[RMDB]
The data come from the RNA Mapping Database (RMDB), library TTRDEL.
This 177-nucleotide RNA was probed chemically with DMS and 2A3.
2A3 adducts were read by reverse transcription with SuperScript II with manganese.

RNA sequence: GGGAACGACUCGAGUAGAGUCGAAAAGAUAUGGACGAGUUGAGCUUUUGACGCUGGAGUCGGAAACGACUCCAGCGAUAAGCUUUGCUCGUCCUAAGUCAAAGCGUUGGUCUUCGGACCAACGCAACCUAUUAGGCUUCUUCGGAAGCCUAAUAGGAAAAGAAACAACAACAACAAC
Reactivity to DMS in 0.01 (KOAc 150mM, MgCl2 10mM, bicine 150mM(pH8.5), 24C), signal-to-noise 1, nucleotides 027 to 126: g000a030u000a150u000g000g010a000c000g000a010g020u010u000g010a000g010c000u000u010u000u000g010a180c050g020c000u000g000g000a030g010u000c020g010g000a020a030a100c000g020a010c000u000c010c010a000g010c010g010a010u000a010a070g020c000u000u000u000g000c000u000c000g000u000c000c010u000a000a040g020u010c010a120a110a110g000c000g020u000u000g000g000u000c000u000u020c230g030g020a020c010c000a000a020c000g010c000a010a030
Reactivity to 2A3 in 0.01 (KOAc 150mM, MgCl2 10mM, bicine 150mM(pH8.5), 24C), signal-to-noise 2, nucleotides 027 to 126: g010a010u050a030u120g010g000a000c000g000a000g020u040u030g010a000g000c010u130u300u300u300g110a070c020g010c000u010g050g000a030g000u030c060g000g010a160a020a010c020g000a000c020u040c000c000a000g000c090g010a000u020a000a000g010c020u020u010u000g000c000u000c000g000u000c000c010u000a020a000g000u000c030a020a130a040g000c010g010u000u010g000g000u000c020u030u050c300g100g000a010c000c000a010a010c000g010c010a020a020